[RMDB]
RNA sequence: GGGAACGACUCGAGUAGAGUCGAAAACCUCAAUGAAGGUUUUUCUGGUGGGGAGAAAAAACGCAAUGAAAUUCUUCAAUUGCUCAUGUUAGAGCCUAAAUUUGCUUUGUUAGAUGAAAUUGAUUCUGGUCUUGAUAUUGAUGCCCUAAAAGUAGUAAAUACCAUCCCCAUUCGUGGGGAUGGUAUUAAAAGAAACAACAACAACAAC
Reactivity to 2A3 in 0.01 (KOAc 150mM, MgCl2 10mM, bicine 150mM(pH8.5), 24C), signal-to-noise 1, nucleotides 027 to 156: c000c000u010c000a040a030u200g090a060a010g010g030u000u000u000u000u000c050u060g030g030u050g000g060g000g030a060g090a030a120a000a000a010a010c030g000c020a020a000u040g030a110a050a070u200u090c110u120u020c020a090a220u110u080g000c010u000c050a030u080g070u140u110a030g000a020g110c000c000u120a160a130a180u070u050u020g030c000u200u040u090g090u090u090a000g020a040u030g000a020a060a090u080u100g030a010u040u050c030u070g000g010u080c020u040u030g010a000u030a090u090u040g030a000u060g040c000c000c000u070a060a180a080a000g050u210a020g150u210a010
Reactivity to DMS in 0.01 (KOAc 150mM, MgCl2 10mM, bicine 150mM(pH8.5), 24C), signal-to-noise 2, nucleotides 027 to 156: c020c000u000c070a070a130u010g040a100a060g010g000u000u000u000u000u000c020u030g000g090u010g010g030g040g030a090g010a000a020a090a080a100a070c050g050c060a050a080u000g000a070a090a140u000u000c060u000u000c040a040a070u000u000g010c000u010c010a100u000g040u000u000a100g000a040g010c040c020u000a020a030a100u010u000u000g010c010u000u000u020g010u000u010a170g020a070u000g010a080a050a130u010u000g030a090u000u010c040u000g030g000u000c030u000u020g010a110u000a080u000u000g020a090u000g010c000c010c030u000a030a050a060a090g040u010a040g040u010a050